[RMDB]
RNA sequence: GGGAACGACUCGAGUAGAGUCGAAAAGAUAUGGAUCCUGAACUACCCACUCAGCUAGGAAGCUUGAUGACCGCAAUCGGAAACGAUUGCGCAAGAGCGCUAGCUGAGUGGGCAGGAUCCUAAGUCACGUCCUUAGAAGGUUCGCCUUCUAAGGACGAAAAGAAACAACAACAACAAC
Reactivity to DMS in 0.01 (KOAc 150mM, MgCl2 10mM, bicine 150mM(pH8.5), 24C), signal-to-noise 1, nucleotides 027 to 126: g000a000u000a300u000g000g030a010u000c000c000u010g000a050a030c070u040a300c000c000c000a000c000u000c000a040g000c000u000a030g000g000a280a230g020c010u000u010g000a140u040g020a150c300c030g020c000a000a000u000c000g030g000a190a080a190c020g000a000u020u000g000c020g000c020a010a060g000a000g050c010g000c000u000a010g000c040u000g000a000g040u000g000g000g010c000a000g000g040a000u000c000c000u000a000a000g000u040c010a220
Reactivity to 2A3 in 0.01 (KOAc 150mM, MgCl2 10mM, bicine 150mM(pH8.5), 24C), signal-to-noise 1, nucleotides 027 to 126: g090a030u140a040u200g020g000a000u010c050c030u000g000a080a060c090u130a130c300c030c000a010c000u000c020a020g060c000u030a030g140g300a300a030g110c050u100u030g050a140u180g090a300c170c000g000c030a000a000u010c010g040g000a070a000a060c010g030a030u000u080g000c000g000c010a100a220g040a000g020c100g000c140u000a000g000c000u000g000a010g000u000g000g000g030c000a010g010g000a000u000c000c030u040a040a000g070u020c000a030
Conditions: 150 mM KOAc, 10 mM MgCl2 and 150 mM bicine (pH 8.5), 24 C. Chemical mapping of a 177-nucleotide RNA with DMS and 2A3. As a SHAPE reagent, 2A3 marks flexible, mostly unpaired nucleotides at the ribose 2'-OH.